[RMDB]
RNA sequence: GGGAACGACUCGAGUAGAGUCGAAAAGAUAUGGAGUGUCACGCUGAUGACCCAUGUGCAUGGCGCUAUGGUCGGAAACGACCAUAGCGUCUGUGAUGCAUGGCAAGGCGAGGACACUCCUAAGUCACAUAAGGAGUAGCUUCGGCUACUCCUUAUGAAAAGAAACAACAACAACAAC
Reactivity to DMS in 0.01 (KOAc 150mM, MgCl2 10mM, bicine 150mM(pH8.5), 24C), signal-to-noise 4, nucleotides 027 to 126: g000a030u010a300u010g000g010a040g010u000g020u000c010a080c000g010c000u000g020a120u010g010a130c300c000c010a000u000g030u010g000c030a040u000g010g000c000g000c000u000a000u010g010g010u000c000g020g000a100a120a290c010g030a010c000c000a000u010a000g010c000g020u010c000u000g000u000g000a110u000g000c000a000u010g000g010c010a100a080g000g000c000g010a210g000g010a010c000a000c000u000c000c000u000a010a080g000u000c040a230
Reactivity to 2A3 in 0.01 (KOAc 150mM, MgCl2 10mM, bicine 150mM(pH8.5), 24C), signal-to-noise 2, nucleotides 027 to 126: g050a030u050a020u210g020g000a000g000u010g000u030c020a010c050g020c020u070g020a300u240g020a150c010c000c020a010u000g000u000g000c050a030u040g040g030c030g000c000u020a000u000g030g020u010c020g000g080a110a140a040c000g000a030c020c000a010u020a010g010c010g010u000c000u000g000u000g010a240u070g010c000a000u010g000g030c030a110a240g020g000c030g110a300g080g000a000c010a000c010u000c000c000u000a000a000g000u020c020a010
This 177-nucleotide RNA was probed chemically with DMS and 2A3.
Values are in units of 0.01, from 0 to 300, in steps of 10.
The RNA was probed in 150 mM KOAc, 10 mM MgCl2 and 150 mM bicine (pH 8.5) at 24 C.
For DMS, 4,824 sequencing reads were counted.
DMS (dimethyl sulfate) methylates the pairing face of unpaired adenines and cytosines.
2A3 adducts were read by reverse transcription with SuperScript II with manganese.
The 2A3 profile rests on 3,352 reads.